Source: RMDB library OK1LIB, as collected in RNAgym.
An RNA of 177 nucleotides, treated with 2A3 and DMS and read out base by base.
DMS adducts were read by reverse transcription with MarathonRT.
DMS (dimethyl sulfate) methylates the pairing face of unpaired adenines and cytosines.

RNA sequence: GGGAACGACUCGAGUAGAGUCGAAAAACUAGUAUGUACAGGGGUAAGUUGACCUGUCAUCUAGACAACUUACCAGGUACUCAAAGGUAAGUUGGUUCAGUACCACAGAGUACGAACUAAGUACUCAGACUAUGGAUGGCUUCGGCUAUCUAUAGUCAAAAGAAACAACAACAACAAC
Reactivity to 2A3 in 0.01 (KOAc 150mM, MgCl2 10mM, bicine 150mM(pH8.5), 24C), signal-to-noise 9, nucleotides 027 to 126: a000c000u000a000g050u120a030u020g040u060a010c000a000g030g010g030g070u190a170a100g090u150u110g130a080c000c000u000g000u000c000a000u000c000u000a000g020a050c000a000a000c000u000u000a000c000c000a020g060g060u070a080c040u050c150a070a040a000g000g000u000a000a000g000u000u000g000g000u020u060c030a000g030u020a030c000c010a030c030a080g010a000g000u000a000c000g050a120a040c030u070a110a010g010u000a010c000u000c020a000
Reactivity to DMS in 0.01 (KOAc 150mM, MgCl2 10mM, bicine 150mM(pH8.5), 24C), signal-to-noise 9, nucleotides 027 to 126: a120c010u000a010g000u070a010u000g000u060a000c000a010g010g000g010g010u030a070a110g010u010u010g000a080c000c000u000g000u000c010a010u000c010u000a000g000a140c010a010a000c000u000u000a000c000c000a130g010g010u030a070c190u020c150a080a160a100g000g000u000a000a010g000u000u000g000g000u010u030c100a090g010u010a100c010c020a130c220a110g000a020g010u000a000c000g000a060a120c200u040a080a090g010u000a010c010u000c020a180